[RMDB]
RNA sequence: GGGAACGACUCGAGUAGAGUCGAAAAUGAUGUGGAUUAAUAGAAACAGUUGUGGGUAUUCAUAUUUCAUAGUGAGAGGUAAAAUUCUUGGAUCUAUGGAAGAUGAACUACUGCGAAAGCAUUUACCGUUUAGCUAAAUGUUCGCAUUUAGCUAAACAAAAGAAACAACAACAACAAC
Reactivity to DMS in 0.01 (KOAc 150mM, MgCl2 10mM, bicine 150mM(pH8.5), 24C), signal-to-noise 3, nucleotides 027 to 126: u000g010a040u010g030u010g000g020a220u000u020a080a100u010a110g000a220a130a090c070a080g020u010u000g000u000g010g000g000u000a060u000u000c000a010u000a050u010u000u010c000a000u000a000g010u000g000a300g000a010g000g010u000a060a100a060a180u020u000c000u010u010g010g010a170u000c000u010a020u010g000g000a020a020g000a030u000g000a030a010c150u000a010c020u000g000c030g000a090a100a120g000c030a050u000u010u010a090c110c090
Reactivity to 2A3 in 0.01 (KOAc 150mM, MgCl2 10mM, bicine 150mM(pH8.5), 24C), signal-to-noise 2, nucleotides 027 to 126: u110g030a030u050g020u060g050g050a080u150u220a180a150u220a200g160a040a140a010c030a060g040u100u050g020u130g090g010g000u050a040u030u030c010a000u010a040u010u000u000c000a000u000a010g010u010g000a040g000a010g030g010u110a070a230a140a100u210u040c010u000u030g070g030a020u020c010u010a010u010g010g010a010a010g000a010u010g010a000a020c050u030a020c010u010g000c020g030a040a020a010g030c020a010u020u030u100a070c020c000
The record gives the reactivity of an RNA of 177 nucleotides to DMS and 2A3. 2A3 adducts were read by reverse transcription with SuperScript II with manganese. High DMS reactivity at an A or C suggests that its Watson-Crick edge is free. For DMS, 1,776 sequencing reads were counted.